[RMDB]
RNA sequence: GGGAACGACUCGAGUAGAGUCGAAAAGGACUGGACCAGGACCACAGGUACCGCCGGACCCAUAUAAGGUACCAACCAGAAUAAGACAGAUACAGAAUGGGCAGCACAAUGUAGCCAGUCAGAAACGCGUGCCUAGUCUACGGCACGAGCGAGCUAAAGUAAUGACUACUUUCGAGUAGUCAUUACUAAAAGAAACAACAACAACAAC
Reactivity to DMS in 0.01 (KOAc 150mM, MgCl2 10mM, bicine 150mM(pH8.5), 24C), signal-to-noise 3, nucleotides 027 to 156: g000g020a170c040u000g000g020a100c040c010a120g010g010a210c020c030a030c050a110g000g000u000a050c010c020g000c080c040g000g000a110c030c010c040a120u000a050u000a080a080g000g020u000a070c010c010a140a080c050c020a180g020a100a080u000a070a090g030a130c060a060g020a110u010a050c020a040g000a130a060u000g020g040g000c010a050g020c000a040c020a040a050u000g030u000a100g040c010c020a060g000u000c030a100g010a050a090a030c020g000c000g030u010g020c000c020u000a220g030u010c120u000a120c150g030g020c000a020c000g010a020g020c010g020a100g030c040u000a050a100
Reactivity to 2A3 in 0.01 (KOAc 150mM, MgCl2 10mM, bicine 150mM(pH8.5), 24C), signal-to-noise 4, nucleotides 027 to 156: g040g010a060c060u050g010g020a040c020c080a080g010g080a050c040c020a080c100a070g030g000u040a040c000c000g060c050c040g070g020a110c010c010c000a010u050a020u010a110a020g040g000u040a040c000c000a000a060c030c020a080g070a170a110u110a130a010g050a060c010a020g080a040u080a140c030a000g100a120a060u110g000g030g040c040a020g000c010a020c000a040a070u110g020u010a020g010c020c030a010g000u020c010a000g060a020a090a000c030g000c010g020u000g000c000c000u100a080g050u040c050u120a040c110g000g000c000a000c000g000a020g010c030g010a030g010c060u140a200a010

Overview:
Structure probing data (DMS and 2A3) for a 207-nucleotide construct. DMS adducts were read by reverse transcription with MarathonRT. For 2A3, 2,299 sequencing reads were counted. For 2A3 the reverse transcriptase was SuperScript II with manganese. For DMS, 4,525 sequencing reads were counted. The reactions ran in a buffer of 150 mM KOAc, 10 mM MgCl2 and 150 mM bicine (pH 8.5), at 24 C. It was measured as part of the RMDB library OK3TST. Reactivities are given for positions 27 through 156.